[RMDB]
RNA sequence: GGGAACGACUCGAGUAGAGUCGAAAAAGCCAGGCCUCAUCCUGAAAUCGGACUGACCAUGACUGACAAACUCGACCUCGCGGUCAAUCACGCGAUGAGCAGUGCUGUCGCGCGUGCGCGAAUGAGCCUGCUGAACCAGGGCAUCGGCCAUGACGCAUAUCCCUACUCCUUUCGAGGAGUAGGGAUAAAAAGAAACAACAACAACAAC
Reactivity to DMS in 0.01 (KOAc 150mM, MgCl2 10mM, bicine 150mM(pH8.5), 24C), signal-to-noise 2, nucleotides 027 to 156: a030g020c020c020a080g030g030c030c000u000c090a160u010c050c010u010g000a050a120a090u000c080g000g000a090c030u000g020a040c030c010a070u000g010a070c030u030g020a120c050a100a100a140c150u010c070g020a130c040c040u000c000g030c060g020g020u010c080a080a030u000c050a090c070g030c020g000a100u000g010a050g040c010a070g020u010g040c060u010g010u000c000g050c000g020c030g010u010g070c020g020c040g000a070a060u000g010a050g040c000c010u000g020c000u000g000a060a070c080c010a130g040g000g000c060a120u020c070g030g030c030c000a080u000g000a080c040g020c040a300
Reactivity to 2A3 in 0.01 (KOAc 150mM, MgCl2 10mM, bicine 150mM(pH8.5), 24C), signal-to-noise 4, nucleotides 027 to 156: a000g050c020c000a020g000g030c010c020u110c040a130u080c010c010u040g030a070a070a030u090c030g020g000a010c030u050g010a050c010c010a040u080g040a070c100u050g010a050c130a090a170a070c100u080c080g060a110c050c000u040c050g030c060g010g000u070c030a020a090u050c050a040c090g070c000g040a060u060g050a010g020c010a030g020u110g170c010u030g010u020c010g000c000g000c010g100u240g050c080g020c000g020a040a050u110g010a000g000c000c000u000g000c010u010g000a020a030c050c000a020g000g030g000c050a060u140c080g020g020c010c000a030u050g040a030c050g040c060a070
This 207-nucleotide RNA was probed chemically with DMS and 2A3.
Conditions: 150 mM KOAc, 10 mM MgCl2 and 150 mM bicine (pH 8.5), 24 C.
For 2A3, 2,525 sequencing reads were counted.
It was measured as part of the RMDB library OK3TST.